RNA sequence: GGGAACGACUCGAGUAGAGUCGAAAAGGAUGCAACGUAGUAAUAUGUGUCAUUGCUAGCUCUUGAAUGACACAUUACUAGUCGUGGUUUGAGACAAGAGCUAGCUCGAGUUACGACAUCUGUAUCGCUACUAGUGACUAUUCGUAGUUACUAGUAGAAAAGAAACAACAACAACAAC
Reactivity to DMS in 0.01 (KOAc 150mM, MgCl2 10mM, bicine 150mM(pH8.5), 24C), signal-to-noise 9, nucleotides 027 to 126: g000g000a020u000g010c010a060a080c210g010u000a030g010u000a030a050u000a080u010g020u010g010u010c050a090u010u000g010c010u000a010g010c010u000c010u000u000g010a100a080u010g000a030c020a030c020a050u000u000a050c140u000a100g010u000c110g010u000g000g000u000u000u000g010a150g000a140c050a030a030g000a020g010c010u000a020g000c000u000c080g000a060g010u000u000a020c020g000a070c040a060u000c120u000g020u000a050u000c050g010
Reactivity to 2A3 in 0.01 (KOAc 150mM, MgCl2 10mM, bicine 150mM(pH8.5), 24C), signal-to-noise 9, nucleotides 027 to 126: g030g000a000u010g000c010a020a020c040g020u010a020g010u010a020a070u060a060u210g140u020g040u050c040a080u010u100g020c010u010a000g000c010u010c000u040u060g080a080a040u070g010a010c010a000c000a040u030u050a040c040u050a030g090u030c050g010u030g020g050u020u030u070g060a020g000a000c010a030a010g000a000g010c000u000a000g000c000u000c020g030a030g010u010u010a010c010g020a020c010a020u020c050u030g010u010a020u010c010g000